[RMDB]
RNA sequence: GGGAACGACUCGAGUAGAGUCGAAAACGCGAUGGAUACGUCCAUCGCGAAUCCGUCCAAGCCGCGGACGUUAAACUGUGGCACGGUUGUGCCUAGGUGCAACCCUGCUCUGUAUGGCGGCACCCCUGCCCAAGCUACCGUCUACGGACGGUAGCAAGACCUACGUGAUGUUCGCAUCACGUAGGUCAAAAGAAACAACAACAACAAC
Reactivity to 2A3 in 0.01 (KOAc 150mM, MgCl2 10mM, bicine 150mM(pH8.5), 24C), signal-to-noise 1, nucleotides 027 to 156: c000g000c000g000a000u000g020g000a040u040a120c190g100u020c000c000a000u010c000g000c000g000a000a010u030c000c000g030u000c030c000a070a050g000c000c000g000c020g010g010a010c010g000u000u010a060a040a010c070u080g040u240g110g000c000a000c000g000g000u020u000g000u020g000c010c010u080a180g050g020u000g000c000a000a020c010c000c010u000g040c010u020c040u080g200u230a150u140g130g060c020g000g000c000a110c000c020c000c000u070g070c060c000c030a090a000g010c000u000a000c000c000g020u000c000u010a050c200g100g000a000c000g000g020u000a000g000c000a000a000